[RMDB]
RNA sequence: GGGAACGACUCGAGUAGAGUCGAAAAUUGACAAGCAUCAAGCUCUGAGAAUAUUUUUUCUCAGUAUCACAAAGCUCAAUGAUUCUGGAAUCUACAUGAUUCCACGAACCAUGCUUGAGUUCAGGAGUCAUAAGUCCGUAUUCGUACGGACUUAUGAAAAAGAAACAACAACAACAAC
Reactivity to 2A3 in 0.01 (KOAc 150mM, MgCl2 10mM, bicine 150mM(pH8.5), 24C), signal-to-noise 9, nucleotides 027 to 126: u100u090g040a030c030a050a010g030c000a060u100c070a080a020g010c030u010c010u040g010a010g020a010a020u080a280u090u220u080u010u040u000c000u000c000a010g040u070a100u140c040a030c060a160a120a020g000c010u030c050a030a110u080g030a080u020u000c000u010g000g000a000a000u010c010u070a270c100a250u300g000a000u010u000c000c000a000c090g010a000a010c020c010a010u040g020c030u030u030g010a030g030u100u060c060a050g030g110a050g130
Reactivity to DMS in 0.01 (KOAc 150mM, MgCl2 10mM, bicine 150mM(pH8.5), 24C), signal-to-noise 6, nucleotides 027 to 126: u010u010g010a160c050a030a030g010c030a130u020c140a090a080g010c030u010c010u000g000a010g010a020a020u010a010u000u010u060u010u000u000c000u000c010a010g000u030a060u030c150a110c220a070a070a070g010c020u010c140a130a070u020g000a090u000u000c000u000g000g000a010a020u000c000u010a100c250a080u020g000a000u000u000c000c000a000c120g010a010a010c040c040a010u000g010c040u000u000g000a070g010u010u010c080a100g020g010a140g010
The record gives the reactivity of an RNA of 177 nucleotides to 2A3 and DMS. For DMS, 14,033 sequencing reads were counted. Values are in units of 0.01, from 0 to 300, in steps of 10. The RNA was probed in 150 mM KOAc, 10 mM MgCl2 and 150 mM bicine (pH 8.5) at 24 C. It was measured as part of the RMDB library OK1LIB.